[RMDB]
Background
This 207-nucleotide RNA was probed chemically with DMS and 2A3. For DMS the reverse transcriptase was MarathonRT. Reactivities are given for positions 27 through 156. The DMS profile rests on 3,330 reads.
RNA sequence: GGGAACGACUCGAGUAGAGUCGAAAAGGGGUCGUGUUGAGGAUGUAUUGAAAUAUGUGGGAGUCCUGAAGCCUCCACGGGACGAAGAACACAUAUCGUACGUACAUCUACCCACCAACACGACGGAGGCACCCAAAGAAAGACUUCGGUCUUUCAAUGUACUGUACUACUUCGGUAGUACAGUACAAAAAGAAACAACAACAACAAC
Reactivity to DMS in 0.01 (KOAc 150mM, MgCl2 10mM, bicine 150mM(pH8.5), 24C), signal-to-noise 2, nucleotides 027 to 156: g020g040g050g030u000c020g030u000g000u000u000g000a170g010g010a040u000g040u010a020u000u000g030a130a050a020u000a010u000g020u000g020g000g020a190g000u000c000c020u000g030a050a090g000c030c000u000c020c050a280c010g000g000g010a000c000g000a110a160g000a100a270c000a000c000a010u000a010u000c040g030u000a270c300g010u000a010c010a010u000c000u000a010c000c000c020a300c030c000a000a010c000a030c000g010a050c000g000g000a030g030g000c040a120c010c030c020a090a090a120g000a010a000a000g000a030c010u010u000c300g060g000u000c000u010u000u000c000a120a220
Reactivity to 2A3 in 0.01 (KOAc 150mM, MgCl2 10mM, bicine 150mM(pH8.5), 24C), signal-to-noise 5, nucleotides 027 to 156: g090g020g030g010u000c000g000u010g000u000u010g000a010g000g020a000u010g020u010a010u050u270g090a150a160a020u030a000u000g000u030g010g010g020a060g000u010c000c000u010g030a090a020g020c010c000u000c000c020a020c030g010g000g000a000c010g040a120a050g010a070a000c010a000c010a010u020a010u050c170g080u190a070c040g010u000a000c000a000u000c010u030a090c050c040c020a060c000c000a000a000c000a000c000g000a000c010g010g010a010g000g000c020a030c000c010c000a030a150a020g010a010a010a000g010a000c040u130u180c300g050g000u000c000u000u000u000c010a010a000